An RNA of 177 nucleotides, treated with 2A3 and DMS and read out base by base. The 2A3 profile rests on 6,158 reads. DMS (dimethyl sulfate) methylates the pairing face of unpaired adenines and cytosines. The data come from the RNA Mapping Database (RMDB), library TTRDEL.
RNA sequence: GGGAACGACUCGAGUAGAGUCGAAAAGAUAUGGAUAACUCUUUUGACGAAGCUUUGGUCGGAAACGACCAUCGCUUCGAUAAGAGUAUCCUAAGUCAAAACGGUCUAGCGUUCGCGCUAGACCGAACUAAGAACAGAUCUUCGGAUCUGUUCUUAGAAAAGAAACAACAACAACAAC
Reactivity to 2A3 in 0.01 (KOAc 150mM, MgCl2 10mM, bicine 150mM(pH8.5), 24C), signal-to-noise 3, nucleotides 027 to 126: g010a020u060a020u170g000g020a040u140a300a300c000u000c000u000u130u100u250g260a120c050g000a000a000g000c000u020u010u000g000g000u010c000g020g020a050a050a020c010g000a000c000c010a010u000c000g000c000u000u000c010g000a000u010a000a000g010a000g000u000a000u000c000c000u020a170a010g070u020c020a000a060a090a140c010g030g000u010c010u010a020g000c000g060u040u050c300g010c000g000c150u000a000g000a000c000c010g000a000a000
Reactivity to DMS in 0.01 (KOAc 150mM, MgCl2 10mM, bicine 150mM(pH8.5), 24C), signal-to-noise 3, nucleotides 027 to 126: g000a030u000a300u010g000g000a010u000a080a070c000u000c000u000u000u010u020g020a160c190g010a020a010g020c010u010u010u010g010g020u010c000g010g010a060a090a140c000g000a010c000c000a000u000c090g010c000u000u000c010g010a050u000a000a010g010a010g010u000a020u000c000c000u000a040a150g010u010c040a060a050a100a190c030g010g000u000c010u000a010g000c000g040u000u000c250g020c000g010c000u000a010g000a000c000c000g000a000a040